Structure probing data (DMS and 2A3) for a 177-nucleotide construct. High 2A3 reactivity points to a flexible backbone, as in loops and unpaired stretches. For DMS, 4,121 sequencing reads were counted. Reactivities are given for positions 27 through 126. For 2A3 the reverse transcriptase was SuperScript II with manganese.

RNA sequence: GGGAACGACUCGAGUAGAGUCGAAAAUUUUAUGCUAUGGAUGAAACUAGAGCAAUUAAGGAUUGGUAUGAAAUUGAAAGCAUCAGAAAAGCUUGUCAGAUUUCAGACAAGAGCCAUUUGGCCGUUAGCCAUCGUAAUAAUUCGUUAUUACGAUGGCAAAAGAAACAACAACAACAAC
Reactivity to DMS in 0.01 (KOAc 150mM, MgCl2 10mM, bicine 150mM(pH8.5), 24C), signal-to-noise 4, nucleotides 027 to 126: u010u010u020u010a080u010g000c020u000a060u010g010g010a050u010g010a140a120a130c010u010a050g000a050g010c030a060a140u020u010a080a090g010g010a130u000u000g000g000u000a080u000g010a030a020a010u010u000g000a060a040a030g010c020a040u010c120a180g010a110a110a130a100g000c010u000u000g000u010c040a070g010a080u000u000u010c060a030g000a120c070a070a070g000a100g020c020c010a160u000u000u010g010g030c010c070g020u000u000a130
Reactivity to 2A3 in 0.01 (KOAc 150mM, MgCl2 10mM, bicine 150mM(pH8.5), 24C), signal-to-noise 3, nucleotides 027 to 126: u020u050u010u040a050u030g010c010u000a010u090g040g020a050u050g130a070a120a050c030u030a050g000a020g090c020a040a110u120u070a120a030g030g020a080u030u070g040g010u170a060u050g020a040a010a000u020u000g010a020a000a030g040c000a020u120c030a040g200a090a110a020a020g020c020u010u030g070u080c000a000g040a290u030u030u050c030a010g010a020c010a010a040g050a010g080c010c000a090u140u090u150g020g010c000c030g050u020u070a010